RNA sequence: GGGAACGACUCGAGUAGAGUCGAAAAUCAACAAUGUCCUUGGUCAGACAUUGCUGGCCCAGCGAAUGGGCAAGACGCGAGUGAUUGCUGAGACGGGUGCCGGUCAGCAUGGAGUGGCCACAGCGAAGCGGAUUACCUGGUUCGCCAGGUAAUCCGCAAAAGAAACAACAACAACAAC
Reactivity to 2A3 in 0.01 (KOAc 150mM, MgCl2 10mM, bicine 150mM(pH8.5), 24C), signal-to-noise 2, nucleotides 027 to 126: u080c000a010a090c020a040a050u130g060u050c030c000u050u020g050g000u060c020a000g010a120c010a040u000u070g040c010u000g020g040c020c000c000a020g060c030g150a120a080u100g020g000g000c000a000a000g070a030c060g050c090g090a050g080u160g070a180u000u100g040c020u050g070a030g000a070c060g120g040g100u070g060c090c030g060g000u000c020a020g000c020a030u040g010g030a070g080u020g030g000c000c050a000c070a050g020c060g050a070a020
Reactivity to DMS in 0.01 (KOAc 150mM, MgCl2 10mM, bicine 150mM(pH8.5), 24C), signal-to-noise 2, nucleotides 027 to 126: u020c090a100a140c150a040a080u020g080u000c000c050u010u000g000g010u010c050a170g000a070c010a010u000u000g000c010u000g000g020c020c000c030a030g020c120g010a080a150u020g010g010g010c000a050a030g020a090c080g000c180g010a110g030u010g020a100u010u000g000c050u000g000a100g020a130c050g000g010g010u000g010c090c120g000g030u000c040a050g030c030a010u000g000g000a120g030u010g020g020c000c000a060c150a070g000c090g010a070a100